[RMDB]
RNA sequence: GGGAACGACUCGAGUAGAGUCGAAAACAGCUGCUGUGAGAUUUGGUCUCAGGAAGGUCCCUCUUCAACACAUGGCCUACUUUCCAGGGGUAGGGAACACAACGGGGUCAGGGAGGACGGCAGGGCAGGAAUAUUUCAUAUUCGUAUGAAAUAUUCCAAAAGAAACAACAACAACAAC
Reactivity to DMS in 0.01 (KOAc 150mM, MgCl2 10mM, bicine 150mM(pH8.5), 24C), signal-to-noise 8, nucleotides 027 to 126: c100a150g000c040u000g010c030u000g010u000g020a090g000a100u000u010u010g020g010u000c010u000c040a090g010g010a080a070g010g010u000c020c010c020u010c040u000u010c060a060a080c130a090c130a100u010g010g010c060c020u000a050c070u000u010u010c050c060a100g010g000g000g010u000a060g010g010g010a080a080c150a070c150a080a120c130g010g010g000g010u010c080a080g000g000g000a130g010g000a070c070g000g020c060a040g000g010g010c130a090
Reactivity to 2A3 in 0.01 (KOAc 150mM, MgCl2 10mM, bicine 150mM(pH8.5), 24C), signal-to-noise 7, nucleotides 027 to 126: c020a010g050c020u050g000c010u020g030u050g150a080g020a130u090u130u200g070g030u020c010u010c040a030g040g060a050a020g030g010u040c010c010c000u040c020u060u040c040a120a090c050a010c020a190u080g050g010c000c010u070a090c040u120u110u020c030c040a020g000g020g000g040u090a060g030g030g020a070a020c080a000c010a100a140c060g020g000g000g040u050c030a010g020g010g010a040g000g040a010c010g010g010c020a020g010g050g000c020a020